[RMDB]
RNA sequence: GGGAACGACUCGAGUAGAGUCGAAAAUUAAAUACAGCACAAUAUAUGAUCGCGUAUGCGAGAGUAGUGCCAACAUAUUGUGCUAAUGAGUGCCUCUCGUUAUCUGUCUUAUAUUACCGCAAACCCAAGCGACGUAAUUAUUCGUAAUUACGUCGCUAAAAGAAACAACAACAACAAC
Reactivity to 2A3 in 0.01 (KOAc 150mM, MgCl2 10mM, bicine 150mM(pH8.5), 24C), signal-to-noise 1, nucleotides 027 to 126: u040u030a000a000a040u140a020c050a010g000c000a000c020a050a020u060a000u020a020u160g120a080u070c000g000c030g090u270a120u300g000c000g010a040g020a020g010u160a040g010u020g010c000c000a040a020c030a040u090a020u100u080g020u000g020c040u050a000a120u120g040a010g070u100g020c000c010u040c010u000c030g010u080u090a050u080c050u020g120u000c010u000u030a090u050a010u180u100a070c120c040g030c010a020a060a090c000c000c000a000
Reactivity to DMS in 0.01 (KOAc 150mM, MgCl2 10mM, bicine 150mM(pH8.5), 24C), signal-to-noise 2, nucleotides 027 to 126: u000u030a060a140a070u010a110c190a070g020c010a010c000a000a000u000a060u000a070u020g010a160u000c030g020c030g010u020a050u010g020c020g010a020g000a300g020u000a030g000u000g010c080c050a140a110c170a030u000a000u000u000g020u000g000c000u010a130a070u000g000a090g020u000g020c100c020u000c030u000c020g000u000u000a080u000c040u000g030u010c020u000u000a050u010a150u000u000a050c060c090g020c120a040a100a100c020c010c010a120